Structure probing data (2A3 and DMS) for a 177-nucleotide construct.
Source: RMDB library OK2TRN, as collected in RNAgym.
The reactions ran in a buffer of 150 mM KOAc, 10 mM MgCl2 and 150 mM bicine (pH 8.5), at 24 C.
DMS adducts were read by reverse transcription with MarathonRT.
2A3 adducts were read by reverse transcription with SuperScript II with manganese.
RNA sequence: GGGAACGACUCGAGUAGAGUCGAAAACUCAGGGAGAUGGGAGAGGAGGGACCACCCCUCACUGUGCAUCUGGGGAGACUGAGGCAGCCCUGCGUGGGGAGAGAAUCAGAUCCUCCUGACGGCCAGCUCAGGACGCAAUAUUCGUAUUGCGUCCUGAAAAAGAAACAACAACAACAAC
Reactivity to 2A3 in 0.01 (KOAc 150mM, MgCl2 10mM, bicine 150mM(pH8.5), 24C), signal-to-noise 1, nucleotides 027 to 126: c010u030c020a030g090g000g040a130g060a110u100g020g100g030a080g070a030g060g060a080g060g040g010a010c000c030a080c030c010c000c000u020c000a030c040u090g050u180g000c010a060u000c060u010g000g000g000g000a100g010a100c030u020g010a020g070g000c040a070g000c010c000c000u080g040c060g110u300g020g000g010g050a040g000a000g000a020a040u100c030a010g040a190u010c010c000u000c000c020u060g060a040c060g060g020c000c010a020g030c030
Reactivity to DMS in 0.01 (KOAc 150mM, MgCl2 10mM, bicine 150mM(pH8.5), 24C), signal-to-noise 2, nucleotides 027 to 126: c100u010c040a200g010g020g000a050g000a120u000g000g020g000a100g000a130g030g000a040g010g010g000a180c080c100a040c070c020c020c000u000c020a040c060u010g010u000g030c090a110u000c020u000g010g020g000g000a070g010a100c050u000g000a020g010g000c110a120g000c070c000c020u000g020c200g000u020g000g000g000g000a060g010a070g010a080a100u000c120a070g000a240u000c050c030u000c030c030u000g000a070c080g040g000c020c030a060g030c230